This 177-nucleotide RNA was probed chemically with DMS and 2A3.
RNA sequence: GGGAACGACUCGAGUAGAGUCGAAAACAUGGAUCGUUCGCGAUCCAUGGCAGGUGGUGGUGCGACCAGCCGACCCAGGCUUUUGGCAUCCCAGCCUUUCCAAUCCAGCCUAUUUCGAUAGGCUGAAACGUAUCGGUGAGUUCGCUCACCGAUACGUAAAAGAAACAACAACAACAAC
Reactivity to DMS in 0.01 (KOAc 150mM, MgCl2 10mM, bicine 150mM(pH8.5), 24C), signal-to-noise 2, nucleotides 027 to 126: c000a000u000g000g020a010u000c000g040u010u030c200g020c000g010a020u010c000c000a000u010g000g030c190a030g000g010u000g030g020u010g020g020u000g010c000g010a070c090c070a040g020c020c010g000a120c120c150c110a200g020g000c010u000u000u010u010g000g020c000a020u010c010c000c020a180g000c000c000u000u010u000c010c010a120a160u010c110c000a000g000c000c000u010a000u000u000u020c160g020a010u010a000g000g020c010u000g020a000a050
Reactivity to 2A3 in 0.01 (KOAc 150mM, MgCl2 10mM, bicine 150mM(pH8.5), 24C), signal-to-noise 2, nucleotides 027 to 126: c000a020u000g020g000a000u010c020g020u100u060c220g000c000g100a010u000c030c000a000u010g000g000c040a030g040g000u010g000g060u120g010g000u020g030c000g080a050c050c050a010g020c000c020g080a180c020c050c090a040g030g010c000u100u060u100u090g100g000c000a020u050c010c000c000a120g050c020c020u000u030u040c020c000a050a070u040c050c000a000g000c020c000u000a010u010u130u060c170g090a000u000a020g020g000c000u000g000a040a030
It was measured as part of the RMDB library M2PK50. The RNA was probed in 150 mM KOAc, 10 mM MgCl2 and 150 mM bicine (pH 8.5) at 24 C. The DMS profile rests on 2,294 reads. The 2A3 profile rests on 2,194 reads.